This 177-nucleotide RNA was probed chemically with DMS and 2A3. Values cover nucleotides 27 to 126. The reactions ran in a buffer of 150 mM KOAc, 10 mM MgCl2 and 150 mM bicine (pH 8.5), at 24 C. For 2A3 the reverse transcriptase was SuperScript II with manganese. Source: RMDB library OK2TST, as collected in RNAgym.
RNA sequence: GGGAACGACUCGAGUAGAGUCGAAAAAGUUUGAGGCUUGAGGACUAUGCGGUAACAGGCUCUGAGCAUGUUUUCUUUCCUGACAGGGUUUGCCUUACUGCCUCAUCUGGCACAACCUGUGAUGAAGCGGUUAGGCAUUAUUCGUAAUGCCUAACCGAAAAGAAACAACAACAACAAC
Reactivity to DMS in 0.01 (KOAc 150mM, MgCl2 10mM, bicine 150mM(pH8.5), 24C), signal-to-noise 4, nucleotides 027 to 126: a070g010u010u000u000g020a070g010g020c020u010u010g010a090g010g010a090c070u000a080u000g000c070g000g000u010a070a110c100a070g000g010c020u000c020u010g010a120g010c030a040u000g020u000u000u010u000c080u000u000u000c000c030u010g010a050c030a030g010g000g010u000u000u000g010c030c010u010u000a030c110u000g000c010c020u000c020a300u000c040u010g000g010c060a070c170a030a090c050c030u000g000u020g000a110u010g000a100a120g010
Reactivity to 2A3 in 0.01 (KOAc 150mM, MgCl2 10mM, bicine 150mM(pH8.5), 24C), signal-to-noise 2, nucleotides 027 to 126: a000g050u060u060u090g040a010g020g000c030u050u060g030a020g040g000a030c040u070a100u200g100c070g080g000u040a080a030c010a030g070g000c000u000c030u060g050a090g030c040a050u060g040u020u090u050u050c020u020u060u030c000c030u000g020a010c020a030g070g030g000u060u080u030g010c030c000u000u030a020c030u050g020c000c020u000c000a010u000c010u020g030g000c040a020c000a110a070c000c020u040g000u050g040a130u110g030a080a010g040